Chemical mapping of a 177-nucleotide RNA with DMS and 2A3. Conditions: 150 mM KOAc, 10 mM MgCl2 and 150 mM bicine (pH 8.5), 24 C. For DMS the reverse transcriptase was MarathonRT. The data come from the RNA Mapping Database (RMDB), library OK2TRN.

RNA sequence: GGGAACGACUCGAGUAGAGUCGAAAAAUUUGAAUGUUUGUGCUUUUUAAAUGAGCCAAGACUAGAGGGGAAACUAUCACCUAAAAUCAGUUUGGAAAACAAGACCUAAAAAGGGAAGGGGAUGGGGAGUACGCUUACUAUUCGUAGUAAGCGUACUAAAAGAAACAACAACAACAAC
Reactivity to DMS in 0.01 (KOAc 150mM, MgCl2 10mM, bicine 150mM(pH8.5), 24C), signal-to-noise 2, nucleotides 027 to 126: a110u000u010u000g020a100a080u020g000u020u000u000g020u010g020c020u000u000u010u030u010a090a100a070u000g000a060g020c000c010a120a050g010a100c020u000a090g000a060g020g000g010g000a110a080a070c120u010a060u010c080a040c040c020u000a050a040a060a100u000c090a080g000u020u020u010g020g000a060a040a040a010c060a050a070g000a080c030c040u000a010a010a030a050a080g020g010g010a060a080g000g000g000g050a100u020g000g000g010g000
Reactivity to 2A3 in 0.01 (KOAc 150mM, MgCl2 10mM, bicine 150mM(pH8.5), 24C), signal-to-noise 1, nucleotides 027 to 126: a010u140u100u080g050a040a030u070g040u060u080u020g030u070g000c010u120u150u100u150u240a070a300a060u190g010a000g000c000c010a000a060g050a030c040u010a030g000a030g020g000g020g030a060a030a050c060u020a050u140c020a100c070c000u030a040a020a030a120u060c010a000g020u020u030u080g090g010a050a070a020a070c010a000a060g050a090c040c000u070a070a120a060a000a020g020g010g030a020a010g000g010g030g030a020u040g020g010g000g010